Structure probing data (2A3) for a 207-nucleotide construct.
2A3 adducts were read by reverse transcription with SuperScript II with manganese.
The RNA was probed in 150 mM KOAc, 10 mM MgCl2 and 150 mM bicine (pH 8.5) at 24 C.
RNA sequence: GGGAACGACUCGAGUAGAGUCGAAAAUAGGGUGCCGUCUGACUGAAGCCGUGCUUGUGCGUUCAGAUUUCAGGCGUCGAUUCUCACAAGAUCGCGGUGAAGUUCUCCCAGGGCAGACCCGCUAAAACUUUACUGGGAUCGCCGUAUGUUUUCCUUGCUUUAAUUGACUCUUCGGAGUCAAUUAAAGAAAAGAAACAACAACAACAAC
Reactivity to 2A3 in 0.01 (KOAc 150mM, MgCl2 10mM, bicine 150mM(pH8.5), 24C), signal-to-noise 2, nucleotides 027 to 156: u120a040g040g000g030u030g030c010c010g000u000c000u000g020a020c000u000g000a000a000g050c050c010g070u040g090c090u120u090g040u100g000c010g070u010u010c010a030g010a160u080u140u090c010a010g010g040c010g030u010c010g030a070u140u090c060u020c010a010c010a030a040g020a080u080c010g000c010g080g000u040g030a090a000g010u040u040c040u040c030c040c010a000g020g010g000c010a020g060a070c000c020c000g000c010u070a030a060a070a090c060u150u180u210a040c020u030g000g000g050a060u100c030g090c070c030g070u130a140u210g050u070u040u020u020c020c000u020u040g020